[RMDB]
RNA sequence: GGGAACGACUCGAGUAGAGUCGAAAAAGCAGGACCGCGUUACGACGCGGUGCUGCAGCAAUGAGUAGAAGCGGUCAAAUUUGGUGUCGAGUUCCAACAAACCAAAUUCGGGCAUUGCUCACUGCAAAAAACUCUCUUUAGUUCGCUAAAGAGAGAACGACAAUUCUUAGUUCGCUAAGAAUUGUCGAAAAGAAACAACAACAACAAC
Reactivity to DMS in 0.01 (KOAc 150mM, MgCl2 10mM, bicine 150mM(pH8.5), 24C), signal-to-noise 2, nucleotides 027 to 156: a130g010c010a050g000g020a030c000c000g020c000g010u010u000a130c200g020a100c000g040c010g030g020u000g020c030u020g030c000a090g020c000a020a040u000g000a050g030u000a030g020a090a110g030c080g040g040u020c020a030a040a050u000u000u000g020g000u010g030u000c080g010a140g000u000u000c150c100a070a130c010a040a080a080c020c000a000a020a040u000u000c040g030g020g010c030a180u000u010g000c010u000c020a040c000u000g020c020a000a040a080a080a050a080c010u000c000u030c000u000u000u000a020g010u000u000c300g050c010u000a000a000a010g000a050g000a020g010a010a020
Reactivity to 2A3 in 0.01 (KOAc 150mM, MgCl2 10mM, bicine 150mM(pH8.5), 24C), signal-to-noise 5, nucleotides 027 to 156: a000g010c000a010g020g050a000c000c000g000c010g010u010u040a140c290g010a000c000g050c000g000g000u010g010c000u000g000c000a010g000c000a000a030u020g000a000g000u040a030g020a160a010g040c070g010g060u050c020a010a010a040u010u010u000g030g000u030g080u150c120g110a110g110u200u100c080c010a050a040c020a070a160a000c010c000a000a000a010u020u020c030g030g000g000c020a020u020u070g000c010u000c000a010c010u010g000c000a000a000a020a020a030a140c000u000c000u000c000u000u010u000a020g020u030u050c200g010c130u010a000a000a000g000a000g000a000g000a000a010
An RNA of 207 nucleotides, treated with DMS and 2A3 and read out base by base. For DMS the reverse transcriptase was MarathonRT. The reactions ran in a buffer of 150 mM KOAc, 10 mM MgCl2 and 150 mM bicine (pH 8.5), at 24 C. The data come from the RNA Mapping Database (RMDB), library M2RFPK.